[RMDB]
RNA sequence: GGGAACGACUCGAGUAGAGUCGAAAAACGAGGCCGUGCCUACUACGGUAGGCACGGACUCGAAUUACGUUCAUCUACUUAAUCGUAGACGCAUCAAUACAUCAUUCAUGGAACGGGGGAUGGUGAAACUAGAAUCAAACGUUCGCGUUUGAUUCAACUACUAGCUAUUCUUCGGAAUAGCUAGUAGAAAAGAAACAACAACAACAAC
Reactivity to 2A3 in 0.01 (KOAc 150mM, MgCl2 10mM, bicine 150mM(pH8.5), 24C), signal-to-noise 4, nucleotides 027 to 156: a000c010g000a000g020g010c000c000g000u000g010c030c000u000a010c010u020a030c210g080g000u000a000g000g040c000a000c030g000g000a000c000u010c000g000a000a000u100u070a030c000g000u000u010c000a020u000c010u000a010c000u030u150a100a050u220c050g000u000a000g020a030c010g020c010a090u160c090a090a110u090a240c010a010u010c000a000u020u030c000a010u040g050g030a010a020c010g000g000g010g000g000a000u010g000g030u010g040a080a020a010c120u130a080g000a000a000u010c000a000a000a010c010g030u060u070c230g010c010g090u000u040u000g000a000u000u000c000a000a000
Reactivity to DMS in 0.01 (KOAc 150mM, MgCl2 10mM, bicine 150mM(pH8.5), 24C), signal-to-noise 2, nucleotides 027 to 156: a160c020g010a040g000g000c000c000g100u000g020c000c010u010a040c020u000a110c300g100g040u010a000g020g040c000a000c000g010g020a010c000u020c010g020a030a080u000u000a080c110g010u000u010c030a260u000c020u010a020c000u000u000a130a090u000c200g000u000a030g010a030c000g020c030a090u000c080a080a100u050a080c020a020u000c020a030u000u000c060a060u010g000g060a060a130c080g030g020g000g110g000a080u000g000g030u010g000a140a030a140c050u000a110g000a020a030u000c010a010a000a000c010g030u000u010c300g020c050g050u010u010u000g000a010u000u000c000a030a140